Overview
The record gives the reactivity of an RNA of 207 nucleotides to 2A3. The reactions ran in a buffer of 150 mM KOAc, 10 mM MgCl2 and 150 mM bicine (pH 8.5), at 24 C.
[RMDB]
RNA sequence: GGGAACGACUCGAGUAGAGUCGAAAAAACGCUGGGCAAAGAGCCACGAUGAAAUUCUUUAAGACAGGGUCCUGAAGCGCGCACGGGACCCAAUGACGAAGAAUGGAGUGGUCCUUUGCCUGUGCUGAAGCGCGCACGGCAACCGAAAGGUGCGAAACUCUGUACUUGUGUUCGCACAAGUACAGAGAAAAGAAACAACAACAACAAC
Reactivity to 2A3 in 0.01 (KOAc 150mM, MgCl2 10mM, bicine 150mM(pH8.5), 24C), signal-to-noise 1, nucleotides 027 to 156: a000a030c030g020c000u020g010g010g000c000a000a010a000g020a030g010c000c000a000c000g110a180u020g000a010a000a000u020u000c020u030u050u040a250a090g110a170c070a030g010g000g000u000c010c010u040g050a160a030g000c000g000c000g000c000a010c020g010g000g000a000c030c010c000a040a140u010g000a000c010g020a010a000g020a000a010u030g000g000a010g010u010g000g020u110c010c010u030u000u000g000c000c000u010g000u000g000c000u020g000a110a040g010c000g000c000g000c000a000c000g010g020c000a000a010c010c000g010a010a040a030g020g000u030g010c010g020a080a050a040